[RMDB]
RNA sequence: GGGAACGACUCGAGUAGAGUCGAAAAGAUAUGGAGCGGUACCUUUUGACGAUACUAAUCUCGGAAACGAGAUGUAUCGAUAAGGUACACGCUCCUAAGUCAAAAGUGGUGAGUUCGCUCACCACAAGUCUCGUAACUUCUUCGGAAGUUACGAGACAAAAGAAACAACAACAACAAC
Reactivity to DMS in 0.01 (KOAc 150mM, MgCl2 10mM, bicine 150mM(pH8.5), 24C), signal-to-noise 1, nucleotides 027 to 126: g000a010u000a290u010g000g000a000g020c000g020g020u000a000c000c000u010u000u010u000g020a130c070g020a010u000a000c040u030a060a130u010c020u000c000g000g000a080a080a100c000g020a000g010a020u000g000u010a000u010c000g000a110u000a030a020g000g010u020a010c000a040c030g020c000u000c000c000u000a000a030g000u000c000a120a080a090a180g020u000g010g050u000g010a000g000u000u010c190g020c000u000c000a020c000c000a000c030a000a020
Reactivity to 2A3 in 0.01 (KOAc 150mM, MgCl2 10mM, bicine 150mM(pH8.5), 24C), signal-to-noise 1, nucleotides 027 to 126: g000a000u060a010u110g000g010a010g030c000g000g050u010a010c000c000u080u020u050u300g300a120c040g000a010u010a000c020u220a150a160u000c010u000c020g010g010a040a030a020c010g000a000g010a010u020g020u010a000u020c010g000a040u030a120a010g030g000u000a000c000a010c000g000c000u010c000c010u000a010a010g000u000c020a000a000a000a190g010u010g050g040u010g000a050g020u050u300c300g030c170u000c000a000c000c010a000c010a000a010
Chemical mapping of a 177-nucleotide RNA with DMS and 2A3. Source: RMDB library TTRDEL, as collected in RNAgym. The 2A3 profile rests on 2,147 reads. The reactions ran in a buffer of 150 mM KOAc, 10 mM MgCl2 and 150 mM bicine (pH 8.5), at 24 C. For DMS, 1,045 sequencing reads were counted.